[RMDB]
RNA sequence: GGGAACGACUCGAGUAGAGUCGAAAAGUCCAGGUGGAGCCCUGGGCCGGCGUUGCGCCCGGCACGGCGAUGGUGUCCGCAACCGCAGCCGCGACAUCCGCCGGGUUAUCCUGCGCGUCGCGCGGGGCUAGAUCAAACGAUUCGUCGUUUGAUCUAGAAAAGAAACAACAACAACAAC
Reactivity to DMS in 0.01 (KOAc 150mM, MgCl2 10mM, bicine 150mM(pH8.5), 24C), signal-to-noise 6, nucleotides 027 to 126: g010u000c000c000a060g000g030u000g000g010a100g010c080c000c000u020g010g000g000c040c020g010g000c080g000u000u010g030c070g000c080c010c010g010g010c010a120c010g010g010c020g000a200u050g010g000u000g010u010c050c060g010c060a140a080c070c060g000c120a250g000c100c030g020c210g000a040c060a040u010c060c050g010c010c000g010g000g010u010u020a070u010c030c050u000g010c010g000c010g000u020c150g000c050g020c010g010g000g000g000
Reactivity to 2A3 in 0.01 (KOAc 150mM, MgCl2 10mM, bicine 150mM(pH8.5), 24C), signal-to-noise 7, nucleotides 027 to 126: g020u000c000c010a010g050g020u090g070g160a060g040c010c010c000u030g010g050g000c010c000g030g010c050g020u040u130g020c010g010c000c030c000g000g000c030a020c030g000g020c000g030a070u170g010g010u020g030u070c070c050g040c080a070a060c020c040g070c120a020g030c050c000g010c030g010a010c010a070u060c030c010g000c010c000g000g000g020u040u060a090u110c010c010u020g000c020g000c010g200u160c130g000c000g000c000g000g000g020g000
The record gives the reactivity of an RNA of 177 nucleotides to DMS and 2A3. The reactions ran in a buffer of 150 mM KOAc, 10 mM MgCl2 and 150 mM bicine (pH 8.5), at 24 C. It was measured as part of the RMDB library OK1LIB. The DMS profile rests on 16,124 reads.